[RMDB]
RNA sequence: GGGAACGACUCGAGUAGAGUCGAAAAGAUAUGGACAGCCCUUCUUUGAUCUACCACCUAAUCUCGGAAACGAGUGAGUGGUAGGGAGAAGGCUGUCCUAAGUCGAAAAGUGUGCUUCGGCACACAACCCAUAGGAUUCGUUCGCGAAUCCUAUGGGAAAAGAAACAACAACAACAAC
Reactivity to 2A3 in 0.01 (KOAc 150mM, MgCl2 10mM, bicine 150mM(pH8.5), 24C), signal-to-noise 3, nucleotides 027 to 126: g010a010u060a020u110g010g000a000c010a020g030c100c110c070u020u020c030u270u180u080g080a130u070c010u010a000c000c000a010c000c020u100a180a140u230c000u010c020g000g050a110a010a030c010g010a030g000u030g030a040g000u010g010g010u010a000g010g030g010a000g010a010a000g010g010c000u000g000u010c000c000u000a020a000g030u020c010g020a090a050a060a170g010u010g000u000g000c000u070u130c290g120g000c000a000c000a000c000a010a040
Reactivity to DMS in 0.01 (KOAc 150mM, MgCl2 10mM, bicine 150mM(pH8.5), 24C), signal-to-noise 3, nucleotides 027 to 126: g000a020u000a300u000g000g000a010c000a000g000c180c040c040u000u000c000u010u000u010g000a080u000c000u000a010c000c000a020c020c040u010a110a070u010c010u000c010g000g000a140a080a190c000g010a010g040u000g000a060g020u000g000g000u000a020g010g010g010a020g010a040a020g000g030c000u000g020u000c000c000u000a000a100g010u000c020g010a090a110a100a160g000u000g030u000g000c020u000u000c240g040g000c000a000c010a010c010a040a090
Annotation
Chemical mapping of a 177-nucleotide RNA with 2A3 and DMS. DMS adducts were read by reverse transcription with MarathonRT. Conditions: 150 mM KOAc, 10 mM MgCl2 and 150 mM bicine (pH 8.5), 24 C. Reactivities are given for positions 27 through 126. For 2A3, 6,759 sequencing reads were counted. The data come from the RNA Mapping Database (RMDB), library TTRDEL.